An RNA of 207 nucleotides, treated with 2A3 and read out base by base.
For 2A3, 648 sequencing reads were counted.
It was measured as part of the RMDB library OK3TST.
[RMDB]
RNA sequence: GGGAACGACUCGAGUAGAGUCGAAAACGCGGUCGCCGCUCAUCGUUGCGGUUGUGGCCGCCGCGCUGUUUGCCAUCGUGCGCGGCCGCGACCCCCUGCUAGACGCGAUGCGGCGCGAGGGGGCAAUGGACUUUUGGAGCGCAGGCUGCUACGCGCGCUUGGGUGACUAAUUCGUUAGUCACCCAAGAAAAGAAACAACAACAACAAC
Reactivity to 2A3 in 0.01 (KOAc 150mM, MgCl2 10mM, bicine 150mM(pH8.5), 24C), signal-to-noise 2, nucleotides 027 to 156: c050g000c030g110g040u060c050g030c020c000g090c040u040c010a180u090c040g040u020u110g140c080g010g050u040u010g050u130g030g000c000c000g000c030c020g000c000g000c000u050g170u190u250u250g220c120c020a060u020c050g010u000g030c100g000c000g040g000c000c000g000c000g080a100c000c000c000c000c000u040g070c150u180a060g060a110c040g010c000g150a200u220g070c100g000g150c000g010c030g000a000g010g020g000g020g070c040a060a050u140g090g040a040c010u010u160u150u080g140g060a070g050c030g000c050a060g010g020c030u020g000c010u060a050c020g000c000g020c020g010
The reactions ran in a buffer of 150 mM KOAc, 10 mM MgCl2 and 150 mM bicine (pH 8.5), at 24 C.